[RMDB]
RNA sequence: GGGAACGACUCGAGUAGAGUCGAAAAGAAGCAGUCCUUAUUGUGUGUGAUGUUUAGUCAUCGCACUGUUCCUACGGGCUGCCAACGUAGGGCCAAUGUGCCGAGAGGCACUAGAAGUACGGCUUAUUAUGAUGCAUCGCCGUACCAAUGAUGCUGACAUGACGCCUAUAUUCGUAUAGGCGUCAUGAAAAGAAACAACAACAACAAC
Reactivity to 2A3 in 0.01 (KOAc 150mM, MgCl2 10mM, bicine 150mM(pH8.5), 24C), signal-to-noise 3, nucleotides 027 to 156: g120a060a030g010c000a000g020u030c020c010u110u130a280u260u220g140u020g000u010g010u000g060a020u010g090u050u160u190a300g110u140c000a000u000c010g000c010a000c000u010g070u040u030c000c010u010a040c020g000g000g020c010u010g000c000c040a040a000c070g150u140a110g000g070g000c000c050a110a090u130g020u050g000c000c000g010a000g000a020g000g000c000a000c000u030a030g030a110a000g000u010a010c010g000g010c010u030u010a070u060u060a080u150g220a020u150g060c080a030u120c080g020c000c000g010u000a010c000c010a040a110u080g030a020u070g000c000u040g020a040
Reactivity to DMS in 0.01 (KOAc 150mM, MgCl2 10mM, bicine 150mM(pH8.5), 24C), signal-to-noise 2, nucleotides 027 to 156: g030a130a100g010c020a030g030u000c000c030u000u010a090u010u020g040u010g030u000g040u050g000a020u000g050u010u000u010a180g020u000c010a030u000c020g050c010a010c000u000g050u000u000c110c020u000a100c190g000g030g020c000u000g010c010c020a040a050c080g000u010a090g030g040g010c050c090a100a180u000g010u000g030c000c000g040a210g020a300g030g000c020a020c010u000a070g000a200a030g000u000a010c030g020g000c020u000u010a160u000u000a130u000g010a270u010g000c090a200u000c150g050c020c020g080u000a020c000c030a050a100u000g000a040u000g000c000u010g010a300

Chemical mapping of a 207-nucleotide RNA with 2A3 and DMS.
For DMS, 4,278 sequencing reads were counted.
For DMS the reverse transcriptase was MarathonRT.
High 2A3 reactivity points to a flexible backbone, as in loops and unpaired stretches.
The reactions ran in a buffer of 150 mM KOAc, 10 mM MgCl2 and 150 mM bicine (pH 8.5), at 24 C.